[RMDB]
RNA sequence: GGGAACGACUCGAGUAGAGUCGAAAAGAAAGCGCGACAGUGACUACCUGACCGGCCAAAGGUAGGAACUGGAGGGACAGAAUGUCUCGAGACGUAUGAGGCCGGAAAUGCGUCGAGCGCGAAGAAAGGGUAAUACGAUGUUCGCAUCGUAUUACCCAAAAGAAACAACAACAACAAC
Reactivity to DMS in 0.01 (KOAc 150mM, MgCl2 10mM, bicine 150mM(pH8.5), 24C), signal-to-noise 2, nucleotides 027 to 126: g020a090a100a060g050c000g020c020g000a240c000a000g000u000g000a180c000u000a020c000c000u010g000a130c030c010g000g010c000c000a150a010a030g050g000u020a040g040g000a150a000c000u020g000g050a290g030g030g000a000c000a250g020a120a130u040g000u010c020u000c000g040a300g010a000c030g030u010a110u000g020a070g000g020c000c040g000g000a000a150a050u020g000c010g040u000c000g030a080g000c000g000c000g000a170a010g010a070a190a050
Reactivity to 2A3 in 0.01 (KOAc 150mM, MgCl2 10mM, bicine 150mM(pH8.5), 24C), signal-to-noise 3, nucleotides 027 to 126: g110a050a110a020g000c000g000c000g000a050c000a000g000u010g060a010c040u020a010c000c000u040g160a110c000c000g010g000c000c010a300a170a000g000g000u000a000g030g000a000a000c000u010g000g010a070g010g000g000a000c020a020g300a200a100u210g000u000c010u000c010g090a110g000a010c000g000u030a090u070g080a050g000g000c020c000g020g000a030a030a020u270g000c020g000u000c000g000a000g000c010g000c020g030a060a040g140a090a070a050